[RMDB]
RNA sequence: GGGAACGACUCGAGUAGAGUCGAAAAGAAGGCUGUUAAUAUAGCUAAAAACGCCUAUGAGAAGGAUAAGGCAGUGGCCCGUAAGUUAGAACGUAUGGCUGAUCAGGCUAUGACUUCUAUGUAUAAGAAGAGAAGUGAGAUUCGUCUCACUUCUCUUAAAAGAAACAACAACAACAAC
Reactivity to DMS in 0.01 (KOAc 150mM, MgCl2 10mM, bicine 150mM(pH8.5), 24C), signal-to-noise 5, nucleotides 027 to 126: g000a130a140g000g000c000u000g010u000u010a110a170u010a120u010a040g020c050u000a050a060a100a130a060c130g000c020c010u000a080u010g010a180g010a130a060g010g010a100u000a040a090g010g000c010a100g030u000g000g000c010c010c020g010u000a080a100g010u000u000a020g020a020a040c120g010u010a060u000g000g010c000u000g000a110u000c300a150g000g000c010u000a020u000g000a060c050u000u000c010u000a040u000g010u000a090u000a070a110g000
Reactivity to 2A3 in 0.01 (KOAc 150mM, MgCl2 10mM, bicine 150mM(pH8.5), 24C), signal-to-noise 2, nucleotides 027 to 126: g080a080a070g070g000c040u040g000u050u070a180a040u280a110u080a110g000c020u100a070a000a050a020a070c060g030c000c020u070a090u160g130a180g060a120a050g160g070a050u060a130a050g050g000c030a030g020u070g010g040c020c000c020g070u040a070a030g040u040u070a000g000a080a020c040g030u050a000u040g000g000c000u020g030a240u200c050a070g030g060c010u000a010u100g090a050c000u010u010c010u010a070u030g110u000a210u050a280a050g100